[RMDB]
RNA sequence: GGGAACGACUCGAGUAGAGUCGAAAAUGGAGGACUGAGAAGGUGAGGCAGUUUUGCCCCGUGCUGCCUUCCACCGGUUAAGACCUCCAAAAUCGAAGGGCUGCCCAGGCAGAGGAUGUCCCCUUGCACGUCAAGAUGACUUCGGUCAUCUUGACGUAAAAGAAACAACAACAACAAC
Reactivity to 2A3 in 0.01 (KOAc 150mM, MgCl2 10mM, bicine 150mM(pH8.5), 24C), signal-to-noise 1, nucleotides 027 to 126: u050g000g000a010g000g050a110c000u050g000a030g110a290a020g030g000u010g020a000g000g000c000a000g000u000u000u060u230g050c000c000c000c000g000u000g020c000u000g000c000c050u010u050c000c000a000c000c000g000g000u010u070a090a040g010a050c000c000u010c000c000a000a010a010a010u100c020g030a000a050g070g030g000c000u060g020c000c000c040a050g060g000c070a030g000a000g030g080a070u180g020u010c000c020c010c030u020u070g010c020
Reactivity to DMS in 0.01 (KOAc 150mM, MgCl2 10mM, bicine 150mM(pH8.5), 24C), signal-to-noise 1, nucleotides 027 to 126: u000g010g000a010g040g020a220c020u000g000a150g000a130a130g050g010u000g000a060g000g000c000a020g010u000u000u000u030g000c000c000c000c000g040u000g000c000u000g000c000c000u010u010c130c020a000c000c010g000g040u000u000a080a030g000a090c000c000u000c030c000a000a070a100a030u020c070g000a130a060g020g000g000c010u040g010c010c010c020a130g010g010c060a050g000a060g000g000a070u010g000u000c010c000c020c090u030u000g000c300
This 177-nucleotide RNA was probed chemically with 2A3 and DMS. Conditions: 150 mM KOAc, 10 mM MgCl2 and 150 mM bicine (pH 8.5), 24 C. Reactivities are given for positions 27 through 126. The 2A3 profile rests on 956 reads.